Source information:
Conditions: 150 mM KOAc, 10 mM MgCl2 and 150 mM bicine (pH 8.5), 24 C. This 207-nucleotide RNA was probed chemically with DMS and 2A3. For DMS the reverse transcriptase was MarathonRT. The 2A3 profile rests on 1,455 reads.
RNA sequence: GGGAACGACUCGAGUAGAGUCGAAAAGUGGGAAGAGAGAUGAAUGGCUGAAGAAAAUAUUACAGAAAGAGGACCUUCAGAACUCAAGAGCUGUACUUCACCCUCCUGUUGGCCAGAAGGUCAAGAGUGUAGGUUUUUGGCCAAUAAAUAACAAUUGCCGUCAUCACUAAUUCGUUAGUGAUGACGGAAAAGAAACAACAACAACAAC
Reactivity to DMS in 0.01 (KOAc 150mM, MgCl2 10mM, bicine 150mM(pH8.5), 24C), signal-to-noise 2, nucleotides 027 to 156: g050u000g010g020g010a060a030g000a130g010a120g010a150u000g010a090a040u000g020g040c030u000g010a040a090g010a060a070a040a210u000a080u020u010a240c030a040g010a100a100a170g010a110g040g020a080c070c000u000u000c080a090g020a080a100c040u000c010a030a140g010a120g020c000u000g000u000a100c090u010u000c010a090c070c000c000u000c010c060u010g000u000u000g020g000c020c030a120g030a110a120g020g020u000c010a000a090g000a020g020u030g010u000a070g010g000u000u000u000u000u000g020g020c030c000a010a060u000a040a050a040u000a050a040c070a050a170u010u000g000
Reactivity to 2A3 in 0.01 (KOAc 150mM, MgCl2 10mM, bicine 150mM(pH8.5), 24C), signal-to-noise 3, nucleotides 027 to 156: g040u080g000g000g010a040a040g030a020g010a010g010a050u070g050a140a040u050g030g000c010u040g030a020a000g030a010a090a010a040u160a060u150u110a050c040a030g060a020a110a020g020a020g010g020a010c010c010u060u060c070a040g020a040a000c020u030c040a040a030g000a010g100c020u030g040u080a050c030u050u090c020a070c060c020c020u000c010c020u090g040u040u010g010g000c010c010a040g030a120a030g120g020u060c000a010a010g040a010g050u130g030u180a070g000g040u090u000u010u040u040g000g020c000c010a010a000u060a030a080a000u170a030a000c090a020a100u100u150g050